[RMDB]
RNA sequence: GGGAACGACUCGAGUAGAGUCGAAAAGCGGAGACUCCGGAGAGUAAACCGUCGUUACGCUGUAACACCGGUAUCGUUCCUCACGCCGUACCAGUUUCUCCCAACCGAAGAUUCCAUGGUAGAUCCUGGACAUUUCGACGAUUACUUCCGAGAGGCCCUUCGUCAACAGUUUCGACUGUUGACGAAGAAAAGAAACAACAACAACAAC
Reactivity to 2A3 in 0.01 (KOAc 150mM, MgCl2 10mM, bicine 150mM(pH8.5), 24C), signal-to-noise 1, nucleotides 027 to 156: g090c020g000g120a150g010a140c010u040c000c030g010g000a080g000a020g020u040a000a100a010c070c000g010u020c000g020u010u000a050c130g040c300u260g080u140a080a010c030a100c130c010g030g050u000a100u150c050g030u050u060c030c000u010c000a020c040g010c000c040g060u030a140c000c000a040g070u000u000u000c040u020c030c010c000a130a100c060c110g030a050a030g060a250u210u000c070c020a050u130g010g000u020a030g000a050u010c010c000u030g000g030a030c000a000u040u060u050c040g020a040c010g010a000u030u030a020c000u030u090c040c020g000a000g040a040g300g060c030c030
Background
The record gives the reactivity of an RNA of 207 nucleotides to 2A3. Values cover nucleotides 27 to 156. It was measured as part of the RMDB library OK3TST.